The record gives the reactivity of an RNA of 177 nucleotides to 2A3 and DMS. The RNA was probed in 150 mM KOAc, 10 mM MgCl2 and 150 mM bicine (pH 8.5) at 24 C. For DMS, 3,091 sequencing reads were counted. 2A3 adducts were read by reverse transcription with SuperScript II with manganese.

[RMDB]
RNA sequence: GGGAACGACUCGAGUAGAGUCGAAAAUUAAACAUGGUUACCAUAAACUAAGGCACAAGGUAGCCAUGAAGUGCCUUAGUUAAAUAAAAGCUGAGCGUUAGCAAAAACCUAAUGCUCAGCAAAAAAACACUAUGAUACGUUUCGACGUAUCAUAGUGAAAAGAAACAACAACAACAAC
Reactivity to 2A3 in 0.01 (KOAc 150mM, MgCl2 10mM, bicine 150mM(pH8.5), 24C), signal-to-noise 2, nucleotides 027 to 126: u110u040a060a060a010c070a080u080g060g000u060u070a070c010c000a050u160a080a110a000c010u020a020a010g010g000c000a010c020a070a190g110g000u060a030g070c000c000a010u090g010a040a010g020u010g010c000c000u020u010a010g000u000u050a060a040a010u040a010a080a010a020g020c020u000g000a010g010c000g000u000u000a010g000c080a160a100a010a030a090c010c000u000a000a000u000g000c000u020c000a000g000c000a050a000a000a000a000a000a000
Reactivity to DMS in 0.01 (KOAc 150mM, MgCl2 10mM, bicine 150mM(pH8.5), 24C), signal-to-noise 3, nucleotides 027 to 126: u020u000a070a060a170c110a040u000g020g010u000u010a120c010c010a140u010a050a050a030c030u000a010a020g010g020c010a010c040a120a120g010g010u000a050g020c160c160a060u000g020a010a070g020u000g020c000c000u000u000a030g010u010u000a020a070a070u000a070a060a080a110g000c000u000g000a000g000c010g020u000u010a000g000c100a020a120a050a100a130c300c000u010a010a010u010g000c000u000c000a000g020c020a000a010a070a070a030a020a040